[RMDB]
RNA sequence: GGGAACGACUCGAGUAGAGUCGAAAAGAGUUCUAAAGAAGAGAUGGUCGGCAAGGAUAUUCGAGUAUUGUUCAACGACAGACUCUUCGCCUUUAAUGUGGCAUCUAAAGGUGCAUCAAACCUAGCGCAGUCGAAGAUACUUCGGUAUCUUCGACUGAAAAGAAACAACAACAACAAC
Reactivity to 2A3 in 0.01 (KOAc 150mM, MgCl2 10mM, bicine 150mM(pH8.5), 24C), signal-to-noise 2, nucleotides 027 to 126: g060a020g010u060u140c040u140a170a030a030g020a020a000g020a000g000a060u140g050g060u020c030g020g020c090a110a080g040g030a040u010a050u090u190c140g120a080g120u080a080u070u090g030u020u040c040a040a010c000g020a000c000a000g030a080c000u020c000u030u000c020g000c000c010u080u080u020a050a080u130g080u090g110g030c010a020u010c060u010a010a050a060g000g020u000g000c000a080u040c050a050a120a110c000c010u050a020g030c100g000
Reactivity to DMS in 0.01 (KOAc 150mM, MgCl2 10mM, bicine 150mM(pH8.5), 24C), signal-to-noise 3, nucleotides 027 to 126: g000a150g000u000u010c050u000a050a060a250g010a030a020g010a030g020a100u020g000g020u010c000g020g020c220a110a130g000g010a050u000a050u000u020c190g010a180g020u000a050u010u010g000u010u000c040a080a100c050g010a040c020a060g000a090c010u010c010u010u000c030g010c030c010u020u010u000a040a080u000g020u000g030g030c060a050u000c130u000a010a050a060g000g020u000g010c110a070u000c080a030a110a080c060c010u000a140g020c170g020
Source: RMDB library OK2TST, as collected in RNAgym. An RNA of 177 nucleotides, treated with 2A3 and DMS and read out base by base. 2A3 adducts were read by reverse transcription with SuperScript II with manganese. The reactions ran in a buffer of 150 mM KOAc, 10 mM MgCl2 and 150 mM bicine (pH 8.5), at 24 C.